[RMDB]
RNA sequence: GGGAACGACUCGAGUAGAGUCGAAAACGCGAUGGAUACGUCCAUCGCGAAUACGCCCGAGCCGCGGGCGUUAAACUGUGGCACGGUUGUGCCUAGGUGCAACCCUGCUACUAAUGGCGGUACCCCUGCCCAAGCUACCGUCUACGGACGGUAGCAACAGUGCAUCGUAGUUCGCUACGAUGCACUGAAAAGAAACAACAACAACAAC
Reactivity to 2A3 in 0.01 (KOAc 150mM, MgCl2 10mM, bicine 150mM(pH8.5), 24C), signal-to-noise 2, nucleotides 027 to 156: c000g030c000g020a000u000g020g000a030u050a040c250g070u060c000c000a010u000c000g000c000g000a000a000u070a010c030g000c000c000c000g020a050g030c030c060g090c050g000g000g000c010g000u000u070a020a050a000c060u090g000u000g030g000c000a000c020g030g010u020u030g010u010g040c000c030u040a210g070g000u010g000c000a000a000c010c010c000u020g040c000u010a010c010u050a100a130u080g120g010c020g010g010u120a100c020c000c000c050u040g010c030c070c030a030a010g000c000u000a000c000c010g010u010c000u010a010c210g050g000a000c010g000g000u000a000g010c010a000a000